[RMDB]
The record gives the reactivity of an RNA of 177 nucleotides to 2A3 and DMS.
For 2A3, 2,075 sequencing reads were counted.
For 2A3 the reverse transcriptase was SuperScript II with manganese.
The RNA was probed in 150 mM KOAc, 10 mM MgCl2 and 150 mM bicine (pH 8.5) at 24 C.
RNA sequence: GGGAACGACUCGAGUAGAGUCGAAAAAUCAGAACUUUCUCAGCCUUCUAGUAAGGAUUCCGAUUCAGAGGAGUCUGAUUGUAAUAAUAAGUCACUUCAUAAUCAAGGUAAUCAGAACUCCAAGCAAACUGUCACUUGUUUUCGAACAAGUGACAGUAAAAGAAACAACAACAACAAC
Reactivity to 2A3 in 0.01 (KOAc 150mM, MgCl2 10mM, bicine 150mM(pH8.5), 24C), signal-to-noise 4, nucleotides 027 to 126: a000u090c050a020g020a090a050c040u140u090u000c060u020c000a030g020c010c000u020u020c050u070a140g090u220a040a010g060g020a050u070u000c090c020g070a030u090u140c130a020g040a060g050g000a020g000u000c000u000g000a000u000u010g050u030a040a120u100a220a080u120a060a050g150u140c060a040c110u130u150c110a080u080a300a090u170c150a100a010g180g000u070a050a000u000c010a000g020a180a050c000u050c010c010a010a000g020c030a000a070
Reactivity to DMS in 0.01 (KOAc 150mM, MgCl2 10mM, bicine 150mM(pH8.5), 24C), signal-to-noise 2, nucleotides 027 to 126: a070u010c090a060g020a070a120c130u000u000u000c000u000c010a110g030c020c010u000u000c000u020a210g040u000a010a030g000g000a130u010u010c070c010g000a040u020u070c240a040g000a120g010g010a000g000u030c000u000g020a000u000u040g040u000a100a080u040a100a100u020a070a080g030u030c080a140c060u020u010c070a080u000a030a100u030c170a060a100g010g030u000a010a060u010c030a000g010a000a020c040u000c000c030a060a150g000c140a040a110